The record gives the reactivity of an RNA of 177 nucleotides to 2A3 and DMS. It was measured as part of the RMDB library TTRDES. The reactions ran in a buffer of 150 mM KOAc, 10 mM MgCl2 and 150 mM bicine (pH 8.5), at 24 C. For 2A3, 10,046 sequencing reads were counted. The DMS profile rests on 6,046 reads.
RNA sequence: GGGAACGACUCGAGUAGAGUCGAAAAGAUAUGGAGCCAGCAGCACUGAGCAACAGCGUGCGUUCGGAAACGAACGCCACGACAUGCUCAAGGGCUCCUAAGUCAAACAAGUGCUUCGGCACUUGAACUAUCUAUUGGUCUUCGGACCAAUAGAUAGAAAAGAAACAACAACAACAAC
Reactivity to 2A3 in 0.01 (KOAc 150mM, MgCl2 10mM, bicine 150mM(pH8.5), 24C), signal-to-noise 4, nucleotides 027 to 126: g010a000u060a030u160g000g000a010g000c030c060a060g110c120a020g140c070a170c270u080g020a010g010c040a040a200c070a210g070c010g000u020g000c000g000u020u000c010g000g000a020a050a010c000g000a000a000c000g000c010c010a000c000g060a040c020a130u240g000c010u010c010a020a050g080g040g000c000u000c000c000u010a030a010g050u020c030a120a080a170c000a000a030g000u000g010c000u070u200c300g160g000c010a000c010u000u010g010a020a010
Reactivity to DMS in 0.01 (KOAc 150mM, MgCl2 10mM, bicine 150mM(pH8.5), 24C), signal-to-noise 6, nucleotides 027 to 126: g010a030u010a300u010g000g000a030g010c020c010a140g020c250a140g020c200a300c190u000g010a020g010c020a080a090c220a140g020c020g000u000g000c000g010u000u000c010g000g000a060a060a140c000g000a000a010c000g000c160c040a000c000g010a070c160a210u000g000c000u000c000a060a110g040g000g010c000u010c000c010u000a020a080g000u010c020a140a140a260c010a010a010g010u000g010c010u000u010c230g050g000c000a000c000u000u010g000a090a300